Chemical mapping of a 177-nucleotide RNA with 2A3 and DMS. 2A3 adducts were read by reverse transcription with SuperScript II with manganese. Reactivities are given for positions 27 through 126.
[RMDB]
RNA sequence: GGGAACGACUCGAGUAGAGUCGAAAACAUUCAUUCACCCCAACUACACAACUAUCUAUAAACCUAGGUAUAGCUAUUCCUCUAUGAGCAGGAACAGUAGUUACAGGAUUCCGAUAUAAAACUAAAGGCACAUACUAAGAUUCGUCUUAGUAUGUGCAAAAGAAACAACAACAACAAC
Reactivity to 2A3 in 0.01 (KOAc 150mM, MgCl2 10mM, bicine 150mM(pH8.5), 24C), signal-to-noise 2, nucleotides 027 to 126: c010a070u170u220c020a060u080u050c040a140c000c000c040c000a010a020c040u140a020c050a000c000a080a110c040u050a030u060c010u010a090u090a190a130a060c000c000u020a040g030g020u080a040u030a050g020c020u020a080u080u000c000c010u030c040u160a170u230g080a040g060c090a010g040g010a010a000c000a000g050u060a000g010u000u040a050c030a040g030g040a060u100u000c020c010g000a010u060a020u070a230a120a040a030c080u110a160a020a060g140
Reactivity to DMS in 0.01 (KOAc 150mM, MgCl2 10mM, bicine 150mM(pH8.5), 24C), signal-to-noise 3, nucleotides 027 to 126: c110a080u000u000c090a070u010u010c100a170c060c010c030c030a070a080c080u010a070c060a040c040a060a060c090u000a030u000c020u030a060u020a080a090a080c080c050u000a080g010g000u010a030u000a080g000c040u000a120u000u010c010c020u000c040u020a130u000g030a150g030c150a000g020g020a020a030c050a050g030u000a060g010u000u000a060c080a050g000g000a100u000u000c120c070g020a060u000a080u000a050a050a080a050c070u010a040a090a130g000